[RMDB]
RNA sequence: GGGAACGACUCGAGUAGAGUCGAAAAGAUAUGGAGCCAGUUGGGAGAGCCCCGUACUCGGAAACGAGUACCGGCGCUCUUUGAUCAACAGGCUCCUAAGUCAAACGUACCGGUUCGCCGGUACGAACGUAAGCUAUCUGUUCGCAGAUAGCUUACGAAAAGAAACAACAACAACAAC
Reactivity to DMS in 0.01 (KOAc 150mM, MgCl2 10mM, bicine 150mM(pH8.5), 24C), signal-to-noise 3, nucleotides 027 to 126: g000a070u000a300u010g000g000a000g010c000c000a050g030u000u000g010g000g010a010g020a020g010c010c090c030c140g030u000a000c000u000c000g000g000a110a130a170c000g010a030g000u000a000c060c160g030g040c300g020c000u000c000u000u010u010g020a160u010c010a020a000c000a080g020g010c000u000c000c000u000a010a060g000u000c030a080a140a300c080g010u000a010c000c000g010g010u000u010c270g010c000c000g000g020u000a000c000g000a030a070
Reactivity to 2A3 in 0.01 (KOAc 150mM, MgCl2 10mM, bicine 150mM(pH8.5), 24C), signal-to-noise 1, nucleotides 027 to 126: g030a010u060a040u170g000g000a020g000c030c030a040g000u020u010g040g030g000a030g000a000g030c040c030c070c040g000u010a010c000u000c000g070g020a070a070a040c010g010a000g020u030a020c020c100g040g000c080g010c030u000c000u080u140u010g040a050u070c000a010a020c000a020g030g020c010u040c000c000u010a040a000g000u000c000a020a070a050c020g010u000a000c010c020g060g090u070u060c300g020c110c000g000g000u000a000c000g000a090a010
Chemical mapping of a 177-nucleotide RNA with DMS and 2A3. Values are in units of 0.01, from 0 to 300, in steps of 10. Reactivities are given for positions 27 through 126. It was measured as part of the RMDB library TTRDES. The reactions ran in a buffer of 150 mM KOAc, 10 mM MgCl2 and 150 mM bicine (pH 8.5), at 24 C. For 2A3 the reverse transcriptase was SuperScript II with manganese.